[RMDB]
RNA sequence: GGGAACGACUCGAGUAGAGUCGAAAAGUACCGUAGUCGCUCAUGUCUCAUGCUGUCUAGCGAUCCUAGGUACCUAGUCACGAUCUCUAGUCUGAUCUGCUCUAGCAUGUCUAUGUGUACUGCACUAGUACAAAUUGAUCUUCGGAUCAAUUUGUACAAAAGAAACAACAACAACAAC
Reactivity to DMS in 0.01 (KOAc 150mM, MgCl2 10mM, bicine 150mM(pH8.5), 24C), signal-to-noise 6, nucleotides 027 to 126: g030u000a040c010c030g010u010a040g010u000c070g020c020u010c130a070u010g010u010c050u010c060a060u010g000c040u010g000u010c110u000a040g010c070g010a020u010c070c040u010a060g000g010u000a060c110c020u000a030g020u020c160a130c170g000a030u000c010u000c010u010a040g010u000c080u000g010a050u010c040u000g010c050u000c130u010a040g010c040a050u010g010u000c030u000a020u010g010u010g010u000a040c040u000g010c110a110c090u000a110
Reactivity to 2A3 in 0.01 (KOAc 150mM, MgCl2 10mM, bicine 150mM(pH8.5), 24C), signal-to-noise 6, nucleotides 027 to 126: g000u020a010c000c020g010u030a010g020u010c060g030c050u030c050a080u110g090u050c030u020c070a040u120g020c030u030g050u090c030u030a010g000c010g030a030u020c010c010u020a030g080g000u080a120c040c010u020a040g060u100c050a030c190g040a070u010c040u000c000u050a050g040u050c060u050g040a080u030c060u100g020c020u040c030u060a020g010c020a030u080g020u020c050u080a050u060g100u000g020u040a050c030u050g040c030a060c090u100a070